RNA sequence: GGGAACGACUCGAGUAGAGUCGAAAAGGCCACCCAGAACGACAACACCGCUCGUCUUAUGGCACACCACAGGGGAGGACUUCUCAACCCUUGCGGGGAGACCCCCCCCAAGGUGUACCUCCUCAAACGACUGGUGGGUCUUCGGACCCACCAGUCGAAAAGAAACAACAACAACAAC
Reactivity to 2A3 in 0.01 (KOAc 150mM, MgCl2 10mM, bicine 150mM(pH8.5), 24C), signal-to-noise 1, nucleotides 027 to 126: g030g030c020c030a060c030c000c000a000g030a090a020c010g040a000c030a120a170c030a020c060c000g030c050u050c030g050u030c050u060u120a100u060g000g010c030a010c000a000c060c000a040c020a110g000g000g000g000a100g010g030a010c000u070u050c000u020c030a020a240c000c000c040u020u150g030c100g000g000g000g000a060g050a000c000c000c000c000c070c100c000c000a080a000g000g000u000g000u020a040c000c020u030c000c000u090c000a090a020a080

This 177-nucleotide RNA was probed chemically with 2A3.
2A3 adducts were read by reverse transcription with SuperScript II with manganese.
It was measured as part of the RMDB library OK1LIB.
Reactivities are rounded to 0.1 and cut off at 0 and 3.
The 2A3 profile rests on 662 reads.